[RMDB]
RNA sequence: GGGAACGACUCGAGUAGAGUCGAAAAUCUUCCUGACGCGGUGCGAUCGAGGAUCCCGCAUUAUGCGUUGAGAACCGUUACACCAUUCAUGUGGCAUGGAUCCCUUGCGCAAGGUACCAGGAUCCAAGGCUAAGGAGGACUUCGGUCCUCCUUAGCCAAAAGAAACAACAACAACAAC
Reactivity to 2A3 in 0.01 (KOAc 150mM, MgCl2 10mM, bicine 150mM(pH8.5), 24C), signal-to-noise 1, nucleotides 027 to 126: u000c000u000u000c000c030u030g020a080c040g000c050g080g020u010g010c030g030a100u040c040g000a190g040g040a040u000c080c060c000g000c050a000u100u130a100u120g060c010g020u010u140g030a030g110a060a040c060c010g050u080u110a020c050a040c100c020a010u140u220c060a020u220g060u110g080g000c040a010u000g000g000a020u010c060c020c000u010u140g040c030g010c120a090a070g150g000u000a070c020c000a020g000g000a000u000c020c050a010a070
Reactivity to DMS in 0.01 (KOAc 150mM, MgCl2 10mM, bicine 150mM(pH8.5), 24C), signal-to-noise 1, nucleotides 027 to 126: u000c210u000u020c000c020u000g000a060c030g040c050g000g090u020g000c010g020a120u000c060g010a300g060g000a140u000c000c000c010g010c100a040u010u000a080u010g060c030g020u000u010g050a120g020a180a150c090c050g000u000u040a080c100a100c010c060a070u000u000c210a210u020g020u060g000g000c110a060u000g010g000a080u000c000c000c050u000u000g070c080g000c130a040a100g010g010u000a030c140c180a170g060g000a000u000c010c010a140a060